RNA sequence: GGGAACGACUCGAGUAGAGUCGAAAACUAUUUACAGUGCUGGAGAAAGGGAGGAGAUUACAGAGCCUGCUGUAUGUGCUUUACGCCACCUAACGGCACGGCACCCAGAUGCUGAGGUAGCUCAGAACUCAUCAUUGAUCUUCGGAUCAAUGAUGAGAAAAGAAACAACAACAACAAC
Reactivity to 2A3 in 0.01 (KOAc 150mM, MgCl2 10mM, bicine 150mM(pH8.5), 24C), signal-to-noise 3, nucleotides 027 to 126: c000u000a050u140u140u120a120c050a010g030u020g080c020u020g000g050a070g060a110a100a040g050g030g010a050g010g020a060g020a080u060u150a060c030a090g110a040g080c000c030u040g000c040u020g040u090a090u100g030u050g010c030u070u130u090a080c110g020c030c000a030c030c040u040a120a030c030g010g000c010a030c070g010g010c010a010c010c010c000a040g050a100u100g020c020u000g010a020g020g040u070a040g020c000u000c010a020g020a070a040
Reactivity to DMS in 0.01 (KOAc 150mM, MgCl2 10mM, bicine 150mM(pH8.5), 24C), signal-to-noise 3, nucleotides 027 to 126: c020u000a070u010u010u010a090c070a060g030u000g010c060u000g000g010a120g010a080a080a150g020g000g000a040g020g000a080g000a090u000u010a090c120a090g000a150g000c040c060u010g000c000u000g010u000a050u000g010u020g000c040u000u000u010a110c210g020c100c030a090c090c140u000a090a090c080g010g000c030a050c120g010g010c060a140c050c030c010a050g000a100u000g000c030u000g000a050g010g020u010a060g000c040u000c040a070g000a140a140

An RNA of 177 nucleotides, treated with 2A3 and DMS and read out base by base. Values cover nucleotides 27 to 126. The data come from the RNA Mapping Database (RMDB), library OK2TST. The 2A3 profile rests on 3,374 reads. Conditions: 150 mM KOAc, 10 mM MgCl2 and 150 mM bicine (pH 8.5), 24 C.